[RMDB]
RNA sequence: GGGAACGACUCGAGUAGAGUCGAAAAAAUCGCUGCCGCACUGCUUGAAGCAAAUCCCCGCCGAGCCGGAGGCCGGACCUGAUCCGGCAGCAAUCUCGCACUUGCACAAAUCCAUAUUGCACUGCAAACAUACGAUAAGAUUCGUCUUAUCGUAUGUAAAAGAAACAACAACAACAAC
Reactivity to 2A3 in 0.01 (KOAc 150mM, MgCl2 10mM, bicine 150mM(pH8.5), 24C), signal-to-noise 9, nucleotides 027 to 126: a000a000u130c050g000c020u040g010c010c010g030c020a030c040u050g030c020u050u110g080a100a020g020c030a050a030a120u050c010c000c000c000g000c010c010g020a020g010c010c020g060g020a040g070g010c010c010g020g010a030c000c070u130g030a190u030c000c000g040g000c000a000g020c010a010a060u030c030u010c030g010c010a030c040u030u080g000c030a020c020a060a080a030u020c030c010a040u080a110u110u070g010c040a040c080u040g010c010a060a070
Reactivity to DMS in 0.01 (KOAc 150mM, MgCl2 10mM, bicine 150mM(pH8.5), 24C), signal-to-noise 9, nucleotides 027 to 126: a070a040u010c080g020c030u010g000c020c030g010c070a090c060u000g010c030u010u010g010a130a090g010c070a050a110a120u010c020c010c010c070g020c060c020g000a110g010c060c050g010g010a110g010g020c010c020g010g000a040c050c130u010g000a130u000c030c010g000g010c010a070g010c060a080a050u010c040u010c040g010c040a060c060u000u010g000c040a050c100a050a080a090u000c030c040a040u010a070u010u010g000c040a080c130u000g000c060a080a090